[RMDB]
RNA sequence: GGGAACGACUCGAGUAGAGUCGAAAACCGACGUCAUGGAGUGCUCAGCACGUGCGGAAGCCAGAGCGAGGAGUUCUGGUACAGCCUCGAUAUACCAAUAGGUAUGCUCCGGGCUCGCAUGCCCGAGCCUAUGACUCCGGUUCGCCGGAGUCAUAGGAAAAGAAACAACAACAACAAC
Reactivity to DMS in 0.01 (KOAc 150mM, MgCl2 10mM, bicine 150mM(pH8.5), 24C), signal-to-noise 5, nucleotides 027 to 126: c020c020g020a150c160g010u000c060a060u000g000g000a080g000u000g020c030u030c060a070g010c100a100c040g040u000g030c000g010g000a100a110g000c010c000a030g000a010g020c000g000a100g030g020a300g010u000u000c020u030g010g000u010a070c210a050g010c030c000u000c300g000a030u030a050u000a030c000c000a170a170u040a090g010g010u010a010u010g000c100u000c030c120g000g010g020c010u010c080g000c030a040u000g000c190c050c050g000a080g010
Reactivity to 2A3 in 0.01 (KOAc 150mM, MgCl2 10mM, bicine 150mM(pH8.5), 24C), signal-to-noise 9, nucleotides 027 to 126: c010c000g020a050c050g030u090c020a090u120g040g030a090g040u090g030c020u020c130a030g000c050a020c070g030u040g000c030g030g060a080a030g000c000c000a000g000a000g010c020g010a050g120g080a060g020u040u000c010u020g000g010u030a020c020a020g010c000c020u070c040g050a030u020a010u010a100c040c040a170a210u110a290g010g010u020a020u060g030c020u040c050c030g010g000g000c010u020c030g010c020a020u090g000c000c010c010g020a030g020